The record gives the reactivity of an RNA of 177 nucleotides to 2A3 and DMS. Values are in units of 0.01, from 0 to 300, in steps of 10. The 2A3 profile rests on 575 reads. For 2A3 the reverse transcriptase was SuperScript II with manganese.
[RMDB]
RNA sequence: GGGAACGACUCGAGUAGAGUCGAAAAGCCGGAAGGUGGUCUGCCACCCCACAGCGUGGGACUUAGGGAAGGGUGACUUCAGGAUCAAGAUGUGCACGAAGGUCACAAUGGAUGAUUUCCUGACAGCCCAUGCAGGGCCGUUCGCGGCCCUGCAUGGAAAAGAAACAACAACAACAAC
Reactivity to 2A3 in 0.01 (KOAc 150mM, MgCl2 10mM, bicine 150mM(pH8.5), 24C), signal-to-noise 2, nucleotides 027 to 126: g030c010c020g000g000a060a020g140g050u090g000g030u080c090u120g080c010c000a010c000c000c000c010a040c040a040g090c030g020u130g000g060g010a030c110u160u200a040g060g030g030a000a100g000g000g000u090g060a090c000u060u010c010a030g010g020a030u000c050a000a060g080a180u130g070u060g060c000a000c040g270a300a010g220g010u110c000a070c000a010a150u100g100g030a030u050g030a020u250u140u000c000c000u000g000a000c020a050g060c000
Reactivity to DMS in 0.01 (KOAc 150mM, MgCl2 10mM, bicine 150mM(pH8.5), 24C), signal-to-noise 1, nucleotides 027 to 126: g140c010c010g000g000a150a010g030g030u000g020g000u070c070u070g000c040c000a080c080c000c000c000a120c040a070g000c070g040u000g030g070g000a150c060u000u000a020g000g010g000a100a050g000g000g000u000g030a020c040u000u000c000a100g000g020a110u000c030a120a280g020a030u000g040u090g000c180a050c010g000a150a220g050g000u010c000a010c000a040a120u000g040g030a130u000g000a030u080u000u020c000c000u000g010a000c300a170g000c030